[RMDB]
RNA sequence: GGGAACGACUCGAGUAGAGUCGAAAAAAAAGAUAUGGAAGCACAGAAGUCAGAACUACUUUCGGGCGGAAUCGGAAACGAUUCCGUCUCUAGCGUGAAGCUGACGGAUGUGCUUCCUAAGUCAAAAUCAACUAGCAUAGUUCGCUAUGCUAGUUGAAAAAGAAACAACAACAACAAC
Reactivity to 2A3 in 0.01 (KOAc 150mM, MgCl2 10mM, bicine 150mM(pH8.5), 24C), signal-to-noise 2, nucleotides 027 to 126: a000a000a000a020g080a020u090a040u110g000g000a000a000g000c000a000c010a000g030a070a000g010u000c000a000g030a120a090c050u150a050c010u200u090u150c060g010g000g000c000g000g000a000a010u020c010g010g030a060a090a070c000g000a020u000u000c000c000g010u000c000u020c000u010a010g000c030g060u130g100a140a010g040c010u010g010a000c000g000g010a000u000g000u000g000c000u010u010c010c000u000a000a000g010u010c010a000a010a020a240
Reactivity to DMS in 0.01 (KOAc 150mM, MgCl2 10mM, bicine 150mM(pH8.5), 24C), signal-to-noise 3, nucleotides 027 to 126: a070a130a110a100g010a040u000a300u010g010g000a010a010g020c000a000c010a000g010a300a210g010u000c000a020g000a040a080c040u000a060c000u000u000u000c250g000g000g000c000g020g000a010a000u000c000g010g000a090a120a190c010g000a010u000u000c000c020g020u010c010u010c040u000a010g030c150g000u000g000a160a110g010c010u000g000a030c020g010g010a300u010g020u000g000c010u000u000c000c010u000a000a030g000u010c040a060a070a070a110
Source: RMDB library TTRDES, as collected in RNAgym. Chemical mapping of a 177-nucleotide RNA with 2A3 and DMS. The reactions ran in a buffer of 150 mM KOAc, 10 mM MgCl2 and 150 mM bicine (pH 8.5), at 24 C.